[RMDB]
RNA sequence: GGGAACGACUCGAGUAGAGUCGAAAACUGAUAUUCGUAUCAGAAGACGGGGUCCUCUAAGACAGCUUGCGACAUGCUGGUACUGAAGCCUCCACGGUACACAGCAACAGCGCAAGUCGAGAGGACGGAGGCACCCAACAUAGCAAUUCGUUGCUAAAACGAACGUACUAUUCGUAGUACGUUCGUUAAAAGAAACAACAACAACAAC
Reactivity to 2A3 in 0.01 (KOAc 150mM, MgCl2 10mM, bicine 150mM(pH8.5), 24C), signal-to-noise 3, nucleotides 027 to 156: c000u010g000a010u010a040u040u110c250g020u040a000u040c000a010g100a220a020g120a120c090g040g010g030g000u000c040c000u010c010u010a050a050g010a010c000a000g020c000u010u000g000c010g100a130c190a210u010g000c020u000g020g000u000a010c000u010g060a180a040g010c000c000u010c000c000a060c040g010g000u040a000c300a010c000a050g020c010a060a050c130a280g030c000g000c010a000a010g010u040c000g010a010g000a010g000g010a000c040g000g000a000g010g040c000a010c000c010c000a030a080c050a120u130a010g000c010a000a070u130u130c190g100u110u030g100c030u190a080a280
Reactivity to DMS in 0.01 (KOAc 150mM, MgCl2 10mM, bicine 150mM(pH8.5), 24C), signal-to-noise 2, nucleotides 027 to 156: c000u000g020a040u000a070u020u000c280g000u000a020u000c010a030g020a120a140g010a030c140g000g020g000g000u000c010c000u000c000u010a210a180g010a100c300a060g000c000u020u000g000c000g050a130c030a160u010g010c000u010g030g030u000a050c030u000g000a080a110g020c010c000u000c030c000a220c020g050g010u000a020c020a150c000a000g070c000a050a130c220a090g010c020g000c010a010a010g020u000c010g010a020g010a060g020g010a110c130g010g010a050g030g030c020a100c020c010c010a110a150c150a100u010a110g000c080a050a150u000u010c180g040u010u040g010c000u000a030a080

Structure probing data (2A3 and DMS) for a 207-nucleotide construct. Reactivities are given for positions 27 through 156. 2A3 adducts were read by reverse transcription with SuperScript II with manganese. The reactions ran in a buffer of 150 mM KOAc, 10 mM MgCl2 and 150 mM bicine (pH 8.5), at 24 C. The data come from the RNA Mapping Database (RMDB), library RNAMAK.